An RNA of 177 nucleotides, treated with 2A3 and DMS and read out base by base.
Conditions: 150 mM KOAc, 10 mM MgCl2 and 150 mM bicine (pH 8.5), 24 C.
2A3 adducts were read by reverse transcription with SuperScript II with manganese.
The data come from the RNA Mapping Database (RMDB), library OK1LIB.
[RMDB]
RNA sequence: GGGAACGACUCGAGUAGAGUCGAAAAGAUGAGAACAUACUGUUCAGUUGGGCGAUCAGGUGACACUCCAACUCUUGCAGGAGGUCACGAGCAAGACAAAGAGGACGGCCUGACUUAACAAAAGAAACGUAGGGAUAUCCUUCGGGAUAUCCCUACGAAAAGAAACAACAACAACAAC
Reactivity to 2A3 in 0.01 (KOAc 150mM, MgCl2 10mM, bicine 150mM(pH8.5), 24C), signal-to-noise 3, nucleotides 027 to 126: g130a110u200g010a020g060a060a000c050a030u130a060c040u030g000u020u000c050a010g000u000u020g030g000g020c030g000a070u050c040a080g210g000u030g020a010c060a150c270u050c000c000a030a140c070u000c060u300u300g010c090a100g010g020a000g000g030u030c000a000c000g020a010g000c060a120a000g050a260c080a070a100a000g050a020g060g100a040c010g050g000c010c000u020g010a000c000u010u000a000a000c000a000a100a000a010g100a000a040a000
Reactivity to DMS in 0.01 (KOAc 150mM, MgCl2 10mM, bicine 150mM(pH8.5), 24C), signal-to-noise 2, nucleotides 027 to 126: g000a040u030g000a220g010a090a020c140a020u010a120c210u030g020u000u000c000a000g000u000u000g010g000g020c070g030a240u020c050a110g000g010u010g020a050c050a250c000u000c000c030a060a130c300u050c080u000u030g000c110a280g000g000a120g000g010u000c030a000c020g000a100g050c050a070a020g020a020c040a060a150a250g010a090g000g000a100c110g010g000c000c000u020g030a000c030u000u020a020a010c040a000a080a120a080g030a020a020a010